[RMDB]
RNA sequence: GGGAACGACUCGAGUAGAGUCGAAAAGGGACUGGCCCGAUGAAGCCCGGUAACCUAACUUUAUUUAAGCGUAAAGUGAAGGUGCUAAUUCCAGCAAAAUGGUGUAUUCCGUUUUGGUAGAUAAGAGAAGCGUGACAUGAGUUCGCUCAUGUCACAAUCUAGCUUGUAGGUUCGCCUACAAGCUAGAAAAAGAAACAACAACAACAAC
Reactivity to DMS in 0.01 (KOAc 150mM, MgCl2 10mM, bicine 150mM(pH8.5), 24C), signal-to-noise 2, nucleotides 027 to 156: g000g020g030a140c040u010g000g000c010c000c030g030a140u000g010a110a110g000c030c000c030g020g030u010a060a050c000c010u010a100a020c000u000u000u000a030u000u000u000a180a280g040c300g000u000a030a010a010g000u000g000a120a030g060g010u000g030c010u000a090a230u000u000c000c000a050g000c000a040a000a010a020u000g000g010u000g030u000a090u000u010c000c000g030u010u010u010u000g000g000u000a020g010a080u000a090a040g000a170g000a140a080g010c070g040u000g000a030c000a000u000g010a040g010u000u000c300g010c010u010c010a000u000g000u000c000a010c000a020a060
Reactivity to 2A3 in 0.01 (KOAc 150mM, MgCl2 10mM, bicine 150mM(pH8.5), 24C), signal-to-noise 3, nucleotides 027 to 156: g000g010g040a010c040u030g050g010c000c020c030g010a040u110g030a040a050g030c030c050c060g000g030u040a050a010c020c000u020a030a000c010u040u000u020a050u030u140u100a140a060g120c060g030u010a020a020a040g000u010g090a160a020g000g010u010g000c000u030a080a040u140u030c020c020a020g000c020a060a000a000a020u050g010g050u150g060u190a100u180u090c010c020g000u020u010u000u030g080g020u120a150g040a180u160a220a060g050a050g060a190a020g120c070g070u000g000a000c000a000u000g000a000g000u030u140c180g030c060u000c000a000u000g000u000c000a000c000a000a000